[RMDB]
RNA sequence: GGGAACGACUCGAGUAGAGUCGAAAAGAUAUGGAUAGGGCUUUAGUUGAAAGCUUUUGACGAAGGAGAAGUGUCGGAAACGACACGUAACUUCGAUAAGCUUCAACUAAAGCCCUAUCCUAAGUCAGAUGUUUUACGAGUUCGCUCGUAAAACAUCAAAAGAAACAACAACAACAAC
Reactivity to DMS in 0.01 (KOAc 150mM, MgCl2 10mM, bicine 150mM(pH8.5), 24C), signal-to-noise 1, nucleotides 027 to 126: g000a030u000a300u020g000g000a020u000a010g000g010g010c020u000u000u000a010g010u010u010g010a040a020a080g000c000u000u000u000u000g030a300c190g000a010a010g010g040a140g050a180a300g010u000g010u000c000g000g010a100a130a230c000g000a000c000a020c000g040u000a090a240c000u000u000c010g000a110u010a040a010g000c000u010u000c010a000a000c000u040a000a000a000g040c010c010c000u000a000u000c000c020u000a010a070g000u030c030a190
Structure probing data (DMS) for a 177-nucleotide construct. Values cover nucleotides 27 to 126. It was measured as part of the RMDB library TTRINS. The RNA was probed in 150 mM KOAc, 10 mM MgCl2 and 150 mM bicine (pH 8.5) at 24 C. In probing experiments dimethyl sulfate is read out at A N1 and C N3, which are open when not base-paired.